[RMDB]
RNA sequence: GGGAACGACUCGAGUAGAGUCGAAAAUUGCGCUUGCCUAUUUAGGCAUACUUCUCAGGAUGGCGCGUUGCAGUCCAACAAGAUCCAGGGACUGUACAGAAUUUUCCUAUACCUCGAGUCAGGUUUGAAAACGUUAGGCACUUCGGUGCCUAACGAAGCAGAUUCUUUUGUUCGCAAAAGAAUCUGCAAAAGAAACAACAACAACAAC
Reactivity to 2A3 in 0.01 (KOAc 150mM, MgCl2 10mM, bicine 150mM(pH8.5), 24C), signal-to-noise 2, nucleotides 027 to 156: u020u050g000c020g000c020u070u140g030c010c020u140a240u210u200u300a040g000g000c000a000u050a060c040u100u120c120u090c140a070g140g010a060u120g010g020c010g000c020g000u010u030g000c000a000g000u000c000c000a040a020c020a190a190g100a240u120c090c050a010g030g010g000a000c000u010g030u040a010c010a040g210a080a040u020u010u000u030c000c010u040a040u040a120c000c040u010c000g020a000g000u000c010a040g110g000u030u090u080g100a080a060a000a020c000g010u000u000a000g010g000c000a010c010u010u040c190g030g000u010g000c000c000u000a000a010c000g000a000a000
Structure probing data (2A3) for a 207-nucleotide construct.
For 2A3 the reverse transcriptase was SuperScript II with manganese.
Values cover nucleotides 27 to 156.
The RNA was probed in 150 mM KOAc, 10 mM MgCl2 and 150 mM bicine (pH 8.5) at 24 C.
It was measured as part of the RMDB library M2RFPK.
The 2A3 profile rests on 1,106 reads.